[RMDB]
RNA sequence: GGGAACGACUCGAGUAGAGUCGAAAAGGGACUGGCCCGAUGAAGCCCGGCAACCUAACUUUAUUUAAGCGUAAAGUGAAGGUGCUAAUUCCAGCAAAAUGGUGUAUUCCGUUUUGGGAGAUAAGAGAAGCGUGACAUGAGUUCGCUCAUGUCACAAGCUAUACACGCUGUUCGCAGCGUGUAUAGCAAAAGAAACAACAACAACAAC
Reactivity to DMS in 0.01 (KOAc 150mM, MgCl2 10mM, bicine 150mM(pH8.5), 24C), signal-to-noise 3, nucleotides 027 to 156: g000g030g000a090c050u010g010g020c030c010c020g000a130u000g020a130a110g010c040c000c070g020g010c000a050a030c000c000u000a140a000c020u010u000u000a010u000u000u000a120a240g040c300g030u000a000a030a020g010u000g000a110a050g020g000u010g000c000u000a080a150u000u000c020c020a290g020c040a040a020a020a040u000g000g000u000g010u000a090u000u000c020c000g030u000u000u000u000g000g000g000a060g010a160u000a060a080g000a150g000a130a120g010c110g020u010g000a030c000a000u010g000a040g000u000u000c300g040c020u010c000a000u000g010u000c000a000c000a000a080
Reactivity to 2A3 in 0.01 (KOAc 150mM, MgCl2 10mM, bicine 150mM(pH8.5), 24C), signal-to-noise 5, nucleotides 027 to 156: g020g010g010a030c050u040g050g070c000c000c010g010a040u100g070a050a050g030c010c000c000g020g000c030a110a120c000c010u020a030a010c010u030u020u030a040u040u120u140a160a060g130c050g040u000a000a000a000g000u020g060a120a020g000g000u000g000c000u010a030a040u130u010c010c020a020g070c050a120a010a020a010u010g020g040u090g040u150a130u140u080c010c000g010u020u010u000u040g040g000g000a120g010a050u150a160a040g090a020g080a120a020g100c050g080u000g000a000c000a000u000g000a000g020u040u140c210g030c070u000c000a000u000g010u000c000a000c000a010a000

Structure probing data (DMS and 2A3) for a 207-nucleotide construct. For DMS, 5,673 sequencing reads were counted. It was measured as part of the RMDB library M2RFPK. The reactions ran in a buffer of 150 mM KOAc, 10 mM MgCl2 and 150 mM bicine (pH 8.5), at 24 C. 2A3 is a SHAPE reagent: it acylates the 2'-hydroxyl of flexible nucleotides of all four kinds.